[RMDB]
The data come from the RNA Mapping Database (RMDB), library OK2TST. This 177-nucleotide RNA was probed chemically with 2A3 and DMS. The RNA was probed in 150 mM KOAc, 10 mM MgCl2 and 150 mM bicine (pH 8.5) at 24 C.
RNA sequence: GGGAACGACUCGAGUAGAGUCGAAAACAACGCGCGAUGGUUGACGUCGCCGGCGGCAUAGAGCCAGCCGUCGUCAACAGCCCGCACUCGGCAGGUGUCAUCGACGUCCAGCCAGCUGCCCGGCGUCGCAUAAGGACCUGUUCGCAGGUCCUUAUGCAAAAGAAACAACAACAACAAC
Reactivity to 2A3 in 0.01 (KOAc 150mM, MgCl2 10mM, bicine 150mM(pH8.5), 24C), signal-to-noise 2, nucleotides 027 to 126: c030a010a010c040g000c000g050c020g140a080u060g030g000u040u040g000a040c030g000u030c020g000c010c060g020g000c000g020g000c030a140u170a210g130a020g070c030c020a010g040c030c010g000u020c010g000u000c020a040a030c020a050g030c010c000c010g020c030a050c030u150c080g090g010c020a020g030g000u020g020u080c070a150u150c110g020a060c010g010u050c040c020a010g000c020c010a040g000c060u060g010c050c020c000g020g000c030g030u070c060
Reactivity to DMS in 0.01 (KOAc 150mM, MgCl2 10mM, bicine 150mM(pH8.5), 24C), signal-to-noise 3, nucleotides 027 to 126: c110a120a060c130g010c080g000c060g000a070u010g040g000u000u000g000a040c050g010u000c020g020c240c020g000g020c030g000g010c010a160u010a100g000a200g010c000c030a060g020c040c010g010u010c010g000u000c090a040a030c040a130g010c030c040c030g000c060a090c040u000c200g020g010c020a050g000g010u000g010u000c040a110u020c090g020a050c020g000u000c060c090a130g000c020c040a090g000c070u000g010c050c060c090g010g010c040g010u020c100
Reactivities are given for positions 27 through 126.